The record gives the reactivity of an RNA of 177 nucleotides to 2A3 and DMS.
The RNA was probed in 150 mM KOAc, 10 mM MgCl2 and 150 mM bicine (pH 8.5) at 24 C.
For 2A3, 1,616 sequencing reads were counted.
RNA sequence: GGGAACGACUCGAGUAGAGUCGAAAAUCUGCCUCAAGUUCUUUUUUCACCAUAGAAUAUUGGGUUCUGUUUAGGGAGAAGAUAAAGCUGGUUGAAGACAACGACACCUUUGAUACAACCGUCGCUUCUCUUGUCUUGAUUUCGAUCAAGACAAGAGAAAAGAAACAACAACAACAAC
Reactivity to 2A3 in 0.01 (KOAc 150mM, MgCl2 10mM, bicine 150mM(pH8.5), 24C), signal-to-noise 3, nucleotides 027 to 126: u030c000u020g090c010c000u050c030a050a060g020u070u090c020u080u080u030u040u070u050c080a120c090c030a110u170a050g030a060a040u070a250u140u200g080g020g000u040u070c020u010g120u060u050u150a090g060g010g000a030g010a050a010g020a020u120a070a090a010g040c050u020g060g000u040u050g050a050a040g070a070c040a090a000c020g080a030c000a040c020c000u060u050u090g060a060u070a090c040a040a050c020c000g130u150c030g010c020u030u000
Reactivity to DMS in 0.01 (KOAc 150mM, MgCl2 10mM, bicine 150mM(pH8.5), 24C), signal-to-noise 1, nucleotides 027 to 126: u010c110u000g000c080c030u010c080a050a110g000u000u000c030u120u060u040u000u000u030c040a130c130c080a120u130a030g020a080a040u000a050u000u020g000g030g010u000u000c030u000g000u000u040u000a080g010g000g010a070g000a000a000g000a000u080a110a040a030g010c000u000g040g060u040u000g040a130a000g000a130c160a130a040c030g000a160c140a050c090c000u000u040u030g000a090u000a030c060a000a060c050c000g000u000c100g030c060u020u000